[RMDB]
RNA sequence: GGGAACGACUCGAGUAGAGUCGAAAAUAAUGGUCACCUCUCAGCCCCUCCACCUUGGAGUGCCCUUUCGGAGCACUGCAGUUCCCGAUAGAAAGGCUAAGCACCUCGCUAUGACGUAAGGUGGGACGUAGAGAUAUUUGUUCGCAAAUAUCUCUACAAAAGAAACAACAACAACAAC
Reactivity to 2A3 in 0.01 (KOAc 150mM, MgCl2 10mM, bicine 150mM(pH8.5), 24C), signal-to-noise 2, nucleotides 027 to 126: u060a000a060u080g050g030u020c030a030c060c000u040c000u030c030a080g050c010c010c000c000u010c000c010a010c020c020u020u020g040g020a040g000u010g000c000c010c000u090u180u090c150g050g000a070g020c020a000c030u060g000c000a000g000u030u000c000c000c000g000a000u000a020g050a010a030a000g060g000c040u050a050a000g080c020a020c030c000u030c010g000c020u060a090u140g040a040c050g050u040a000a030g030g010u010g000g040g010a010c070
Reactivity to DMS in 0.01 (KOAc 150mM, MgCl2 10mM, bicine 150mM(pH8.5), 24C), signal-to-noise 5, nucleotides 027 to 126: u000a100a070u000g000g010u010c050a080c040c020u000c040u000c060a090g010c030c010c030c040u000c010c010a040c040c030u010u010g000g010a050g020u000g010c010c010c010u000u010u010c170g010g010a090g000c020a020c020u010g000c030a120g000u000u000c010c000c000g010a080u000a050g010a050a050a030g000g010c060u010a120a130g010c160a130c020c000u010c270g010c020u000a040u000g010a100c170g000u000a060a040g010g020u000g000g000g010a080c180
Description: This 177-nucleotide RNA was probed chemically with 2A3 and DMS. Reactivities are given for positions 27 through 126. For DMS the reverse transcriptase was MarathonRT. 2A3 adducts were read by reverse transcription with SuperScript II with manganese. For 2A3, 3,449 sequencing reads were counted. The reactions ran in a buffer of 150 mM KOAc, 10 mM MgCl2 and 150 mM bicine (pH 8.5), at 24 C.